[RMDB]
This 207-nucleotide RNA was probed chemically with 2A3 and DMS. Values cover nucleotides 27 to 156. Reactivities are rounded to 0.1 and cut off at 0 and 3. DMS adducts were read by reverse transcription with MarathonRT. The reactions ran in a buffer of 150 mM KOAc, 10 mM MgCl2 and 150 mM bicine (pH 8.5), at 24 C. For 2A3, 1,920 sequencing reads were counted.

RNA sequence: GGGAACGACUCGAGUAGAGUCGAAAAGUGACAGACGUGACUGGGAGGCUUCUUGUUUUCUAGGAUCGUGUACCGAGGCCACGGCCACAGGUAUUGCAAACCGCUUUCGAUCCAGUGGCGCCAAUACAGGACGGGACGACGAACAACUUGGCGGGGAAUAUGUUCUAACGUUCGCGUUAGAACAUAUAAAAGAAACAACAACAACAAC
Reactivity to 2A3 in 0.01 (KOAc 150mM, MgCl2 10mM, bicine 150mM(pH8.5), 24C), signal-to-noise 3, nucleotides 027 to 156: g120u070g050a030c030a070g070a050c030g030u020g020a040c030u070g020g010g020a040g000g000c000u080u060c040u160u240g090u070u080u040u050c020u060a070g030g000a050u050c050g030u040g010u070a030c010c030g020a000g010g000c030c030a060c160g050g000c000c000a030c070a050g050g000u010a010u020u060g010c020a050a110a190c050c060g020c040u050u170u090c050g040a050u030c020c010a030g020u010g080g010c020g050c040c000a040a020u110a070c040a030g060g040a010c020g000g000g030a030c040g020a010c040g050a080a040c040a030a020c070u050u120g000g000c000g010g000g030g000a040
Reactivity to DMS in 0.01 (KOAc 150mM, MgCl2 10mM, bicine 150mM(pH8.5), 24C), signal-to-noise 2, nucleotides 027 to 156: g000u000g000a070c060a160g020a290c030g030u000g010a260c030u120g020g010g020a070g010g010c050u000u010c100u000u020g020u000u000u000u010c040u000a120g020g010a130u000c060g030u020g030u000a080c050c000g000a120g050g000c050c020a140c070g020g010c030c000a050c050a110g010g020u000a030u010u000g000c000a070a080a110c040c030g010c050u000u000u000c060g010a110u000c120c020a100g010u010g000g000c040g000c020c030a020a090u000a080c030a130g010g010a030c080g020g000g020a080c040g000a060c050g040a020a080c030a030a070c060u000u010g010g030c000g010g040g030g050a110